Chemical mapping of a 207-nucleotide RNA with 2A3 and DMS. The 2A3 profile rests on 859 reads.

RNA sequence: GGGAACGACUCGAGUAGAGUCGAAAAAGCAGUCACUGGUCUAGCUGAAGAGGAAGGAGCCAGGCUCCUGCUUCGUAACCGAGGCAUCUAGCAUCCAGCCAAAGAACUUUUUUGCCUCUGACUAAGGAGCCACUGGUUAUCGGAGCCGGCUCAAUUACCUAUUAAAUCCCUUCGGGGAUUUAAUAGGAAAAGAAACAACAACAACAAC
Reactivity to 2A3 in 0.01 (KOAc 150mM, MgCl2 10mM, bicine 150mM(pH8.5), 24C), signal-to-noise 2, nucleotides 027 to 156: a000g020c010a020g020u080c040a010c110u070g050g000u000c030u060a020g000c030u030g020a050a020g090a070g080g030a120a070g080g020a020g000c030c120a110g070g000c000u000c000c000u020g050c030u040u110c020g020u030a030a010c080c000g030a050g000g000c010a020u010c020u040a010g010c010a070u050c030c050a050g060c020c020a120a130a040g030a140a150c030u180u130u070u040u160u090g000c000c000u000c020u030g050a130c020u040a080a020g010g000a000g000c000c000a040c060u000g100g010u150u100a060u220c020g000g000a010g010c000c000g010g000c020u010c000a010a010u010u030a020
Reactivity to DMS in 0.01 (KOAc 150mM, MgCl2 10mM, bicine 150mM(pH8.5), 24C), signal-to-noise 2, nucleotides 027 to 156: a070g020c010a040g010u000c050a060c040u000g020g010u010c020u000a060g000c050u000g010a130a150g010a110g030g000a080a110g000g000a060g050c020c070a190g060g030c000u000c030c000u010g050c010u000u000c010g000u010a050a110c100c000g030a110g040g010c020a050u000c030u000a050g060c040a150u010c030c060a130g030c090c070a050a110a100g040a120a070c050u000u000u000u000u000u000g000c020c010u000c010u010g020a030c020u020a100a090g010g010a300g000c030c070a110c040u000g030g030u010u000a070u000c040g000g010a110g010c040c040g060g000c040u000c010a030a020u000u010a100